[RMDB]
Source information:
This 207-nucleotide RNA was probed chemically with 2A3. Reactivities are given for positions 27 through 156. It was measured as part of the RMDB library RNAMAK.

RNA sequence: GGGAACGACUCGAGUAGAGUCGAAAAAUAAAACGCUGGGCAAUGAAUAAGAUUGUGUUGACAUGAGAAUCUGAAGCGCGCACGGAUUCUCAACAGCAACACACUCUUACAUUGCCUGUGCUGAAGCGCGCACGGCAACCGAAAGGUGCGAUAGUAAGCAUUAGAUCAUCUUCGGAUGAUCUAAUGCAAAAGAAACAACAACAACAAC
Reactivity to 2A3 in 0.01 (KOAc 150mM, MgCl2 10mM, bicine 150mM(pH8.5), 24C), signal-to-noise 2, nucleotides 027 to 156: a010u080a010a070a000a030c000g000c010u000g020g010g020c020a010a060u020g060a160a220u170a120a000g000a010u010u020g000u010g020u000u010g030a120c180a300u300g000a000g000a000a000u010c000u020g030a260a020g010c000g000c000g000c000a010c020g000g000a000u010u020c000u010c020a010a040c080a030g000c000a000a000c000a000c000a000c000u000c000u000u020a010c000a000u010u000g000c010c000u000g000u010g000c000u020g040a090a000g000c000g000c020g000c000a010c010g020g000c000a010a000c030c000g010a040a030a010g000g000u000g000c000g040a040u070a080g150u140a140a060